[RMDB]
RNA sequence: GGGAACGACUCGAGUAGAGUCGAAAAUGAUAUGAUUCAAUUAGCUUCCGACUCAUUCAUCCAAAUACCGAGUCGCCAAAAUUCAAACUAGACUCGUUAAAUGAAUGAAUGAUGCGGUAGACAAAUUCGACAGCUAUUACUUCGGUAAUAGCUGUCGAAAAGAAACAACAACAACAAC
Reactivity to 2A3 in 0.01 (KOAc 150mM, MgCl2 10mM, bicine 150mM(pH8.5), 24C), signal-to-noise 1, nucleotides 027 to 126: u210g020a050u110a180u280g140a110u170u060c040a000a040u060u130a160g000c050u030u000c000c070g080a150c010u030c000a000u000u000c000a000u000c010c010a000a000a090u000a010c000c000g030a000g010u010c000g030c090c040a280a150a000a000u220u090c050a040a010a030c110u170a050g000a000c000u010c000g030u000u010a010a010a000u000g000a000a000u000g010a000a050u000g000a000u080g000c000g030g070u000a000g010a050c040a050a050a100u110u000
About this RNA:
Chemical mapping of a 177-nucleotide RNA with 2A3. Values are in units of 0.01, from 0 to 300, in steps of 10. It was measured as part of the RMDB library RFM100. The RNA was probed in 150 mM KOAc, 10 mM MgCl2 and 150 mM bicine (pH 8.5) at 24 C.